[RMDB]
RNA sequence: GGGAACGACUCGAGUAGAGUCGAAAACGCGACCAAUACCGUGUCCGCAAUAUUCACGAACGACGGAGAAGCCUUCUGCUUCGACAAAUUUCUGAAUCGCCGCACCGAUUUCGCGCAGAUUAAUGCCUCAGCCAUGUACUUUCGAGUACAUGGCUGAAAAAGAAACAACAACAACAAC
Reactivity to DMS in 0.01 (KOAc 150mM, MgCl2 10mM, bicine 150mM(pH8.5), 24C), signal-to-noise 2, nucleotides 027 to 126: c050g000c020g010a040c300c130a120a080u010a040c100c040g020u000g000u000c090c140g000c070a060a130u010a070u040u020c010a030c140g020a050a010c050g010a300c080g010g000a210g000a070a050g020c010c220u000u000c140u020g010c010u000u000c030g000a300c020a030a090a110u000u000u000c020u000g000a020a000u000c110g000c010c020g040c010a100c070c030g020a090u000u000u000c010g050c070g000c030a020g000a220u010u000a050a060u000g020c050c060
Reactivity to 2A3 in 0.01 (KOAc 150mM, MgCl2 10mM, bicine 150mM(pH8.5), 24C), signal-to-noise 2, nucleotides 027 to 126: c010g000c000g000a030c060c060a040a020u110a110c000c030g020u020g020u080c010c020g000c030a010a110u060a070u280u030c000a020c110g010a030a010c030g090a030c070g050g000a060g010a050a000g040c000c030u150u150c100u200g040c040u000u030c030g000a000c030a010a060a030u050u050u020c030u000g050a030a050u020c060g070c090c010g030c000a020c000c000g050a040u030u050u020c040g030c000g010c020a000g020a120u130u170a080a120u100g020c000c040

This 177-nucleotide RNA was probed chemically with DMS and 2A3.
It was measured as part of the RMDB library OK2TST.
The 2A3 profile rests on 1,015 reads.
For 2A3 the reverse transcriptase was SuperScript II with manganese.